The record gives the reactivity of an RNA of 207 nucleotides to DMS and 2A3. The DMS profile rests on 6,785 reads. Conditions: 150 mM KOAc, 10 mM MgCl2 and 150 mM bicine (pH 8.5), 24 C. The data come from the RNA Mapping Database (RMDB), library OK3TST.

RNA sequence: GGGAACGACUCGAGUAGAGUCGAAAAUCGUUUAUCUCGCCGUACAAGGCUGACCGCGAGACUGCGCGCAAGCUGCACGAGGUGCCGACGCCUGGCGAGGAGACGGGUCUGCCUUUCGUCGAGGUGUAUGUCGAUGUGCCAGUGGAGGUGGCAGAGACAAUGGCUUGUAUUUCGAUACAAGCCAUUGAAAAGAAACAACAACAACAAC
Reactivity to DMS in 0.01 (KOAc 150mM, MgCl2 10mM, bicine 150mM(pH8.5), 24C), signal-to-noise 2, nucleotides 027 to 156: u000c020g060u010u000u000a050u000c010u000c000g020c010c010g000u000a100c150a110a090g020g020c020u020g010a070c050c020g020c000g000a190g020a090c060u000g030c020g020c020g010c070a120a130g000c080u000g040c020a070c040g020a160g030g020u000g000c040c020g000a200c140g000c010c030u000g000g010c000g000a090g010g000a110g000a070c040g020g000g010u010c020u000g000c000c010u000u000u010c050g010u000c050g010a040g030g010u000g030u010a060u010g030u000c030g010a100u000g010u010g020c010c030a120g020u010g010g000a100g000g030u000g030g010c030a090g000a190g000a200
Reactivity to 2A3 in 0.01 (KOAc 150mM, MgCl2 10mM, bicine 150mM(pH8.5), 24C), signal-to-noise 6, nucleotides 027 to 156: u070c020g000u030u050u070a110u030c010u010c010g000c010c000g060u080a070c040a130a020g020g000c020u020g020a020c010c010g100c040g090a040g090a150c090u140g020c040g000c010g000c030a050a020g020c020u060g000c070a020c060g190a120g000g090u040g030c020c030g070a090c040g030c010c050u030g020g000c020g000a010g000g010a010g010a010c020g000g010g030u010c020u030g000c000c000u030u070u090c020g020u000c020g000a040g040g020u060g030u070a080u110g110u060c040g020a040u040g020u040g060c020c040a070g030u090g070g060a080g050g020u050g020g000c030a010g010a010g020a050